[RMDB]
Description:
The record gives the reactivity of an RNA of 177 nucleotides to 2A3 and DMS. The RNA was probed in 150 mM KOAc, 10 mM MgCl2 and 150 mM bicine (pH 8.5) at 24 C. 2A3 is a SHAPE reagent: it acylates the 2'-hydroxyl of flexible nucleotides of all four kinds. For DMS, 6,518 sequencing reads were counted. DMS adducts were read by reverse transcription with MarathonRT.
RNA sequence: GGGAACGACUCGAGUAGAGUCGAAAAGGAGCGGUGGACGCCUACGUGCUCGAAGGAGGCUCGGCGCGCAAGCUGAUCGAGGCCCGCGAGAAGGCAUUCUGGGCGGCAAAAGCACUCGGCGCCGACGGCCGAGAUGAAAAUUCGUUUUCAUCUCGGCAAAAGAAACAACAACAACAAC
Reactivity to 2A3 in 0.01 (KOAc 150mM, MgCl2 10mM, bicine 150mM(pH8.5), 24C), signal-to-noise 3, nucleotides 027 to 126: g060g010a060g030c050g000g040u070g040g020a040c060g030c010c010u030a040c060g060u060g010c010u010c060g040a100a070g090g050a040g040g040c040u010c020g000g000c010g000c010g010c040a050a050g000c020u080g020a230u100c020g020a040g110g050c010c010c010g060c020g010a040g030a040a050g070g030c090a080u060u040c030u070g040g110g000c010g030g000c030a060a050a050a000g010c010a030c070u070c050g070g000c010g000c020c010g030a040c030g040
Reactivity to DMS in 0.01 (KOAc 150mM, MgCl2 10mM, bicine 150mM(pH8.5), 24C), signal-to-noise 6, nucleotides 027 to 126: g000g010a090g010c050g010g020u000g010g010a090c060g010c040c010u000a080c190g020u010g010c020u000c030g010a130a120g010g000a120g010g010c070u000c030g010g000c010g020c000g010c220a090a120g000c040u000g000a100u010c040g010a120g010g020c040c010c020g020c030g010a080g000a130a080g020g020c170a080u000u000c060u020g000g000g020c020g000g000c070a050a070a100a110g000c040a070c060u000c110g010g020c040g000c010c000g000a050c130g010